[RMDB]
RNA sequence: GGGAACGACUCGAGUAGAGUCGAAAAGUACAAAAUGAGUAACCAGGGAUAUAAAUUGAGCUCAUUCAUCUUAGCCCAUAAUUGGUGCCUGUCCACUGUCAAAGAAUAAGUAAAGAUCACUAAAAGAUCCUGAUCCAUUAUUCGUAAUGGAUCAGGAAAAAGAAACAACAACAACAAC
Reactivity to 2A3 in 0.01 (KOAc 150mM, MgCl2 10mM, bicine 150mM(pH8.5), 24C), signal-to-noise 1, nucleotides 027 to 126: g060u050a000c060a000a300a020a040u000g010a040g070u040a050a100c040c020a000g050g040g070a070u140a040u120a230a150a020u150u080g000a020g000c010u000c020a000u040u040c010a100u000c010u000u060a000g020c050c000c000a030u180a160a040u090u080g030g000u000g000c040c000u010g070u010c010c020a000c030u000g050u020c050a000a030a240g050a070a100u160a170a000g080u080a000a080a060g020a050u020c010a070c140u080a040a060a070a030g090a000
Reactivity to DMS in 0.01 (KOAc 150mM, MgCl2 10mM, bicine 150mM(pH8.5), 24C), signal-to-noise 2, nucleotides 027 to 126: g000u000a070c170a030a040a040a030u010g000a080g000u010a130a120c100c070a060g000g010g010a150u030a180u000a030a040a090u010u000g010a140g020c040u000c020a010u000u010c050a070u000c010u000u000a130g010c010c000c020a100u010a060a090u020u000g000g000u010g000c110c030u000g000u020c030c060a030c050u000g000u020c110a090a090a050g010a080a070u030a070a060g030u000a050a010a100g020a070u000c040a030c100u010a040a060a090a080g030a110
Conditions: 150 mM KOAc, 10 mM MgCl2 and 150 mM bicine (pH 8.5), 24 C. Structure probing data (2A3 and DMS) for a 177-nucleotide construct. The DMS profile rests on 1,137 reads. As a SHAPE reagent, 2A3 marks flexible, mostly unpaired nucleotides at the ribose 2'-OH. The data come from the RNA Mapping Database (RMDB), library OK2TST. Values cover nucleotides 27 to 126.